An RNA of 177 nucleotides, treated with DMS and 2A3 and read out base by base. The 2A3 profile rests on 1,549 reads.

[RMDB]
RNA sequence: GGGAACGACUCGAGUAGAGUCGAAAACUUCGUCGCGGACGUAUUCGGUGUAGGCCUCGUCAAGCGCUACGACGACAUCCGCUGGCACCUUCGCCAUGAACUCCAAAAACGCUUCUCGACGCACCACCGACGAGUCGUUAUUCGUAACGACUCGUCGAAAAGAAACAACAACAACAAC
Reactivity to DMS in 0.01 (KOAc 150mM, MgCl2 10mM, bicine 150mM(pH8.5), 24C), signal-to-noise 1, nucleotides 027 to 126: c080u000u010c030g000u000c030g000c070g000g010a010c030g010u000a110u000u010c080g000g060u000g010u000a100g000g040c220c120u000c070g020u010c090a120a060g000c060g060c020u000a020c090g000a060c040g040a080c200a090u000c040c000g010c040u010g000g060c010a130c140c030u000u010c070g040c040c000a040u000g000a060a170c150u010c030c060a070a000a070a120a110c140g000c100u000u000c000u000c020g010a050c080g000c090a140c100c030a060c090
Reactivity to 2A3 in 0.01 (KOAc 150mM, MgCl2 10mM, bicine 150mM(pH8.5), 24C), signal-to-noise 1, nucleotides 027 to 126: c020u040u070c030g040u020c010g000c060g030g030a030c020g000u070a130u080u080c060g000g020u020g050u060a050g120g000c060c000u060c040g090u010c050a120a000g020c060g060c100u060a030c070g110a030c000g030a020c000a040u050c010c020g000c010u030g000g000c010a090c010c030u100u120c040g000c020c000a030u090g030a070a050c020u040c020c000a000a210a000a000a000c020g010c050u030u000c030u020c020g000a000c000g000c030a040c020c020a010c040